[RMDB]
RNA sequence: GGGAACGACUCGAGUAGAGUCGAAAAAUACAAAUUACCAAUGAAGACCCAACAAGUUCAGUGGGUCGUCAAACUAUAAUACUGGAAGAUUGCAAUAUGGACUCAGGCAUAAUUGCUAAAUUUGAUGCUGAUGGGGAGUAUUUAGAUGAAGAUAUGGGAUAGUAAGUUAAUUCGUUAACUUACUAUCAAAAGAAACAACAACAACAAC
Reactivity to 2A3 in 0.01 (KOAc 150mM, MgCl2 10mM, bicine 150mM(pH8.5), 24C), signal-to-noise 7, nucleotides 027 to 156: a010u180a030c040a020a100a030u170u070a110c020c050a030a030u080g020a070a030g000a010c000c020c020a040a060c060a120a070g160u280u200c090a020g020u030g000g000g000u010c000g000u000c010a070a080a020c040u090a030u070a300a110u120a140c040u040g060g000a050a020g040a150u060u120g020c010a030a040u040a070u140g030g020a030c020u020c110a040g050g000c010a030u050a090a060u190u060g000c010u040a080a110a060u090u050u100g030a020u050g010c020u020g000a080u040g000g000g020g000a020g010u030a030u030u090u070a050g020a060u070g040a030a030g020a070u080a060u170g060g020
Reactivity to DMS in 0.01 (KOAc 150mM, MgCl2 10mM, bicine 150mM(pH8.5), 24C), signal-to-noise 4, nucleotides 027 to 156: a130u000a210c080a060a090a160u000u000a120c030c020a070a220u000g020a080a040g020a030c020c000c010a050a130c040a060a080g000u000u000c050a110g020u010g010g020g020u010c000g000u000c010a050a070a120c080u000a100u000a070a120u000a080c070u000g020g000a120a120g000a090u000u020g020c060a090a120u000a060u000g000g000a070c030u010c080a140g020g000c020a070u000a070a080u000u000g000c020u000a040a070a140u000u000u000g020a080u000g010c020u000g010a090u000g010g010g020g020a080g030u000a050u000u000u000a100g020a070u000g010a050a100g000a090u000a060u000g030g020